[RMDB]
RNA sequence: GGGAACGACUCGAGUAGAGUCGAAAAGAAUAUCCGAUAUGCCAGCAUAAUAUCGAAUCACGGCACAAUAGCGCUCGUCUGCGUUCUGUCAGGGCCUGUUUUGGUAAUGCCUUUCUUUCUGUUAUGCCAACACUUGAACGUUCGCGUUCAAGUGUUGAAAAGAAACAACAACAACAAC
Reactivity to 2A3 in 0.01 (KOAc 150mM, MgCl2 10mM, bicine 150mM(pH8.5), 24C), signal-to-noise 2, nucleotides 027 to 126: g040a060a120u060a070u160c060c020g050a060u010a040u160g120c050c020a010g020c000a070u040a110a030u050a120u090c000g010a030a050u040c040a050c130g000g040c000a020c020a090a170u060a040g050c040g010c000u010c080g300u060c150u070g030c020g010u000u050c020u030g150u040c060a110g070g080g000c000c010u010g060u010u020u010u050g030g020u060a040a030u070g020c000c010u010u080u030c000u000u090u010c020u040g060u080u050a030u100g040c040
Reactivity to DMS in 0.01 (KOAc 150mM, MgCl2 10mM, bicine 150mM(pH8.5), 24C), signal-to-noise 2, nucleotides 027 to 126: g000a100a090u000a060u020c020c000g020a090u010a060u010g010c090c100a120g000c050a060u010a060a040u000a010u000c010g010a040a030u020c100a040c250g000g020c030a030c060a060a060u010a060g030c070g010c020u000c300g010u000c110u010g010c030g010u010u000c040u000g000u000c030a140g040g000g000c020c000u000g010u000u010u000u010g000g000u000a080a080u050g000c050c060u000u000u000c040u010u000u000c050u030g000u000u000a020u010g010c090
Structure probing data (2A3 and DMS) for a 177-nucleotide construct. 2A3 adducts were read by reverse transcription with SuperScript II with manganese. The reactions ran in a buffer of 150 mM KOAc, 10 mM MgCl2 and 150 mM bicine (pH 8.5), at 24 C. The DMS profile rests on 1,713 reads.